[RMDB]
RNA sequence: GGGAACGACUCGAGUAGAGUCGAAAAAGAACUGGAUCUCUGAAGUUACUAGAGGUCUCAAUGCUGUUUGGAUCUGUAGAAAAGUUUCAACUUAGGGUCCUUAAGUUUGCCUCAUGUAAGUUCAGCACAAUUGCAAUUUGUUCGCAAAUUGCAAUUGAAAAGAAACAACAACAACAAC
Reactivity to DMS in 0.01 (KOAc 150mM, MgCl2 10mM, bicine 150mM(pH8.5), 24C), signal-to-noise 5, nucleotides 027 to 126: a070g010a130a110c090u000g020g010a120u010c050u000c020u010g000a040a050g010u010u000a030c030u000a300g000a020g010g010u000c230u000c130a040a050u020g020c020u000g010u000u000u000g020g010a030u000c010u010g000u000a080g000a070a070a130a080g000u000u020u010c220a090a070c020u000u000a130g000g010g010u000c010c000u000u000a050a030g010u000u000u010g020c010c010u000c030a210u010g000u000a020a050g000u000u000c000a030g010c300a150
Reactivity to 2A3 in 0.01 (KOAc 150mM, MgCl2 10mM, bicine 150mM(pH8.5), 24C), signal-to-noise 3, nucleotides 027 to 126: a000g050a060a020c080u130g030g080a080u040c050u000c000u110g020a050a040g130u020u010a030c000u020a070g010a010g010g040u040c020u000c110a040a060u150g000c020u050g140u300u060u030g000g000a000u010c010u020g080u170a090g160a120a150a040a030g040u140u200u270c110a090a060c010u040u060a030g000g000g010u000c000c000u010u050a030a000g000u000u060u110g000c000c000u000c000a040u040g030u030a020a200g040u030u000c010a000g000c030a020
An RNA of 177 nucleotides, treated with DMS and 2A3 and read out base by base. Conditions: 150 mM KOAc, 10 mM MgCl2 and 150 mM bicine (pH 8.5), 24 C. The data come from the RNA Mapping Database (RMDB), library OK2TST. The DMS profile rests on 4,229 reads. DMS adducts were read by reverse transcription with MarathonRT.